[RMDB]
RNA sequence: GGGAACGACUCGAGUAGAGUCGAAAACUGCAAUCCCAGCACUUUGGGAGGCUGAGGAUGGUGGAUCAAUUGAGCUCAGGAGCUCACGAACAGCCUGUGCAACAUGGUGAAACCUCAUCUCUACAAAAAAUAACAAAAAUUAGCCAGGUGUGGUGGAGUACUGGUAAUUAUUCGUAAUUACCAGUACAAAAGAAACAACAACAACAAC
Reactivity to DMS in 0.01 (KOAc 150mM, MgCl2 10mM, bicine 150mM(pH8.5), 24C), signal-to-noise 1, nucleotides 027 to 156: c030u000g030c000a120a120u000c000c010c010a120g050c070a080c070u010u010u030g030g020g010a080g030g000c030u010g000a040g010g000a070u040g000g060u000g000g000a170u010c040a060a100u010u010g010a220g040c030u000c050a300g030g030a140g000c050u000c030a050c150g010a070a070c110a070g010c010c010u010g000u000g040c040a060a100c070a010u000g030g030u010g000a060a030a040c040c030u000c000a050u000c030u010c040u010a130c030a000a020a020a070a080a130u000a040a090c080a000a040a030a040a210u000u000a130g010c000c060a090g010g020u010g000u000g000g000u000g010g010a270
Reactivity to 2A3 in 0.01 (KOAc 150mM, MgCl2 10mM, bicine 150mM(pH8.5), 24C), signal-to-noise 3, nucleotides 027 to 156: c060u110g030c030a070a100u040c030c010c000a000g040c030a070c040u150u200u070g040g030g020a060g050g000c040u020g070a010g030g000a030u070g030g030u030g010g020a020u040c030a040a090u080u080g010a030g000c010u020c080a110g070g050a050g060c020u030c050a050c050g100a090a030c030a010g040c000c000u030g010u020g020c030a050a050c000a080u070g020g020u030g030a050a030a030c010c010u020c010a070u030c030u010c020u080a090c110a020a080a000a030a020a040u200a110a030c030a030a070a080a070a050u110u100a040g040c050c020a020g010g020u050g030u020g030g040u070g010g050a040
Structure probing data (DMS and 2A3) for a 207-nucleotide construct.
2A3 adducts were read by reverse transcription with SuperScript II with manganese.
DMS adducts were read by reverse transcription with MarathonRT.